An RNA of 177 nucleotides, treated with DMS and read out base by base. The RNA was probed in 150 mM KOAc, 10 mM MgCl2 and 150 mM bicine (pH 8.5) at 24 C. DMS adducts were read by reverse transcription with MarathonRT.
[RMDB]
RNA sequence: GGGAACGACUCGAGUAGAGUCGAAAAGAUAUGGACUCCGUAGAGCGCAUCUGCUAAGGGAGAACCCAUUCGGAAACGAAUGGUCCCUCCCUUAGCAGAUGAACUACGCUCGAGGGAGUCCUAAGUCCUUCUAAACUACCUUCGGGUAGUUUAGAAGAAAAGAAACAACAACAACAAC
Reactivity to DMS in 0.01 (KOAc 150mM, MgCl2 10mM, bicine 150mM(pH8.5), 24C), signal-to-noise 4, nucleotides 027 to 126: g000a110u010a300u000g000g010a010c010u000c010c000g000u000a300g000a020g010c030g020c010a020u000c000u000g000c010u000a000a020g000g010g000a020g000a140a180c300c000c010a010u000u000c020g010g000a160a140a220c010g010a000a000u000g000g000u010c160c190c010u000c000c000c000u000u000a000g000c000a000g000a000u010g000a030a040c240u020a300c030g000c000u000c000g000a270g000g000g000a030g020u000c000c000u000a020a070g000u010c050